[RMDB]
Structure probing data (DMS) for a 177-nucleotide construct.

RNA sequence: GGGAACGACUCGAGUAGAGUCGAAAACUAAGAUCAGUGGUUGAGAUAUUUCGCAGACCCUGUACUGGGUGGAUCAGCUGGCACCCCCCAGAUUGAUAAACUGGCUCAUCUAGUCUUGUGGCCCCCAGAAUAAAAUCUCGUUCGCGAGAUUUUAUUCAAAAGAAACAACAACAACAAC
Reactivity to DMS in 0.01 (KOAc 150mM, MgCl2 10mM, bicine 150mM(pH8.5), 24C), signal-to-noise 1, nucleotides 027 to 126: c030u010a050a020g010a130u010c030a080g000u000g030g000u020u000g000a200g000a120u000a120u010u000u030c070g040c060a210g000a030c000c010c050u010g010u010a090c100u000g010g000g020u010g030g000a070u010c040a020g010c050u000g000g040c070a270c020c010c040c080c030c000a070g010a150u000u000g000a120u010a020a080a170c070u010g040g010c050u010c060a030u000c020u010a070g010u010c060u000u000g050u010g000g000c050c040c030c050c050a180
The RNA was probed in 150 mM KOAc, 10 mM MgCl2 and 150 mM bicine (pH 8.5) at 24 C. For DMS, 700 sequencing reads were counted. For DMS the reverse transcriptase was MarathonRT.